[RMDB]
RNA sequence: GGGAACGACUCGAGUAGAGUCGAAAAUGACCUCUGGCGAGAGGAGAACGGCUGUGAGUGCACCAAGGCCGUGAACUUUGCCAUGCAUGAACUUCAGCUCAUCCGGGUGGAGAAGCAGUACCUUCACCACAACCUCGACCACCUGGUCGAGGAGCUCCAAUGUGUAAUGAUUCGUCAUUACACAUUGAAAAGAAACAACAACAACAAC
Reactivity to 2A3 in 0.01 (KOAc 150mM, MgCl2 10mM, bicine 150mM(pH8.5), 24C), signal-to-noise 9, nucleotides 027 to 156: u110g070a100c000c010u000c020u030g030g020c040g070a070g000a020g150g040a030g080a040a010c010g020g010c020u030g060u090g130a120g070u150g060c050a050c070c040a100a070g040g000c010c010g020u020g020a040a020c020u040u050u070g000c010c010a020u060g010c000a030u070g050a100a050c020u110u100c060a040g010c040u040c070a130u060c090c070g090g000g000u010g000g020a040g010a070a020g050c070a010g030u080a090c010c000u010u010c020a020c010c010a040c030a040a080c000c000u010c010g000a010c010c010a120c090c130u210g000g000u000c000g000a000g000g010a010g010c010u010c020
Reactivity to DMS in 0.01 (KOAc 150mM, MgCl2 10mM, bicine 150mM(pH8.5), 24C), signal-to-noise 4, nucleotides 027 to 156: u000g010a140c000c020u000c030u000g020g020c070g030a140g020a110g020g020a120g010a190a080c040g020g030c000u000g010u010g020a220g030u000g000c040a140c080c030a090a140g020g030c010c040g020u010g000a040a090c050u000u000u010g010c030c040a150u000g020c030a100u000g010a110a060c030u000u000c050a090g020c050u000c050a100u010c030c060g000g010g020u020g000g000a130g010a050a110g000c050a130g010u000a110c090c010u000u000c010a050c020c010a090c040a080a130c000c010u010c000g000a040c010c000a230c160c210u010g020g020u000c010g000a010g050g010a040g000c060u000c040
The data come from the RNA Mapping Database (RMDB), library OK3TST. Structure probing data (2A3 and DMS) for a 207-nucleotide construct. Values cover nucleotides 27 to 156. For DMS the reverse transcriptase was MarathonRT. High DMS reactivity at an A or C suggests that its Watson-Crick edge is free.